[RMDB]
RNA sequence: GGGAACGACUCGAGUAGAGUCGAAAAAAAAGAAAGAAAGCGGUUGGGUGGGUCCAUCGACCGUCGUGGCGUAUUCGGACGCUUUACCACGACGCGAGGAAAUAGCGAGACCGACCACCCCCUUUAACAGAGGUAUAGUAGUUCGCUACUAUACCAAUCUAUAUGUGACGUUCGCGUCACAUAUAGAAAAAGAAACAACAACAACAAC
Reactivity to DMS in 0.01 (KOAc 150mM, MgCl2 10mM, bicine 150mM(pH8.5), 24C), signal-to-noise 1, nucleotides 027 to 156: a080a030a060a140g000a160a070a080g000a100a170a110g000c150g020g000u000u000g020g000g000u010g030g000g030u010c000c010a090u000c060g000a080c140c000g020u000c000g000u000g000g030c020g000u000a090u000u000c070g060g020a220c050g070c080u000u000u000a020c000c000a010c000g010a030c000g000c040g020a070g010g000a040a060a040u000a030g040c040g000a140g000a160c000c020g040a020c000c010a040c000c000c010c020c040u010u000u010a080a090c060a210g000a190g040g030u000a020u000a010g050u000a030g030u010u000c300g030c020u000a030c000u000a030u000a000c000c000a010a000
Reactivity to 2A3 in 0.01 (KOAc 150mM, MgCl2 10mM, bicine 150mM(pH8.5), 24C), signal-to-noise 2, nucleotides 027 to 156: a000a000a000a020g100a040a070a020g050a070a030a020g090c140g010g130u210u130g130g030g030u010g000g070g030u000c020c010a130u160c020g020a020c020c010g010u010c000g000u000g010g000c080g030u080a100u090u200c050g100g040a020c040g020c050u110u040u110a040c010c010a000c000g000a010c010g020c000g010a040g000g060a050a100a070u060a040g040c060g010a020g060a060c000c000g010a010c000c000a000c000c000c000c000c000u020u060u030a050a080c090a090g070a040g230g000u000a000u010a000g010u000a000g020u000u070c270g010c070u010a000c000u000a000u000a000c010c000a000a010

The record gives the reactivity of an RNA of 207 nucleotides to DMS and 2A3. In probing experiments dimethyl sulfate is read out at A N1 and C N3, which are open when not base-paired. For 2A3, 1,098 sequencing reads were counted. DMS adducts were read by reverse transcription with MarathonRT. The RNA was probed in 150 mM KOAc, 10 mM MgCl2 and 150 mM bicine (pH 8.5) at 24 C. Source: RMDB library M2RFPK, as collected in RNAgym.